[RMDB]
RNA sequence: GGGAACGACUCGAGUAGAGUCGAAAAUUCUGACACCAUUCCUGAUGAGAAACAGAAUGGUCACAGUUUAUAUCUAGCAGACAAUUUGACUGCUGAUGAAACAAAGGCGCUUAAAGAGUUAUAUGGCGGAUAUUGCUAUGUUCGCAUAGCAAUAUCCAAAAGAAACAACAACAACAAC
Reactivity to DMS in 0.01 (KOAc 150mM, MgCl2 10mM, bicine 150mM(pH8.5), 24C), signal-to-noise 2, nucleotides 027 to 126: u020u010c030u010g030a220c090a030c010c030a030u000u000c110c070u000g010a100u010g010a210g000a110a140a210c050a030g020a050a010u030g010g000u000c090a200c150a070g010u000u000u000a070u010a050u030c010u030a000g000c000a010g010a110c080a060a150u010u010u000g020a100c010u000g030c000u000g010a020u000g000a100a060a040c040a030a040a180g010g060c030g010c150u000u000a110a070a140g020a060g010u000u070a080u010a030u000g000g000c300
Reactivity to 2A3 in 0.01 (KOAc 150mM, MgCl2 10mM, bicine 150mM(pH8.5), 24C), signal-to-noise 2, nucleotides 027 to 126: u010u000c010u030g060a040c020a000c030c000a000u020u020c030c060u040g050a050u050g080a070g070a060a100a000c020a000g030a000a020u020g010g010u010c010a060c000a060g000u000u030u010a200u000a010u050c060u070a030g010c010a000g070a130c070a180a180u120u200u230g040a060c000u010g000c000u000g010a020u010g010a030a040a000c030a030a080a000g050g000c080g010c120u100u150a090a060a020g070a010g030u090u050a170u050a030u180g070g030c060
Chemical mapping of a 177-nucleotide RNA with DMS and 2A3. For DMS the reverse transcriptase was MarathonRT. 2A3 adducts were read by reverse transcription with SuperScript II with manganese.